About this RNA: An RNA of 177 nucleotides, treated with DMS and 2A3 and read out base by base. The DMS profile rests on 5,324 reads. For 2A3, 2,202 sequencing reads were counted. 2A3 is a SHAPE reagent: it acylates the 2'-hydroxyl of flexible nucleotides of all four kinds. For DMS the reverse transcriptase was MarathonRT. For 2A3 the reverse transcriptase was SuperScript II with manganese.
[RMDB]
RNA sequence: GGGAACGACUCGAGUAGAGUCGAAAAGAAAGAAAUCAGGGAAAUGCAAGUCAAAACUACAAUGAGAUAGCAUCUUACUCCAGUUAGAAAGGCUUUUUUCUGAAAGACAGGCAAUAACAGAUGCUAAUCCUUUUAGUCCUUUCGAGGACUAAAAGGAAAAAGAAACAACAACAACAAC
Reactivity to DMS in 0.01 (KOAc 150mM, MgCl2 10mM, bicine 150mM(pH8.5), 24C), signal-to-noise 4, nucleotides 027 to 126: g030a100a140a030g040a070a100a070u010c010a020g000g000g000a010a010a040u010g000c030a060a010g020u020c010a080a080a050a080c040u020a070c240a130a160u030g000a040g000a060u010a080g000c010a300u010c030u000u020a080c050u030c130c100a030g020u000u000a170g000a010a080a050g010g000c040u000u010u000u000u000u010c020u000g000a070a020a030g000a120c060a020g000g010c070a030a050u030a060a060c130a080g000a070u000g030c000u000a100a170
Reactivity to 2A3 in 0.01 (KOAc 150mM, MgCl2 10mM, bicine 150mM(pH8.5), 24C), signal-to-noise 4, nucleotides 027 to 126: g100a020a070a000g080a010a110a040u060c050a040g020g010g060a010a010a000u130g050c040a000a070g130u120c090a080a070a220a080c040u100a040c040a090a160u280g000a020g010a070u050a060g020c020a010u000c000u010u030a010c020u000c040c010a000g030u070u040a020g040a070a150a010g060g000c000u080u050u030u000u030u010c000u050g040a050a020a020g100a010c060a110g010g100c060a030a060u110a140a080c070a060g030a050u010g000c000u010a020a150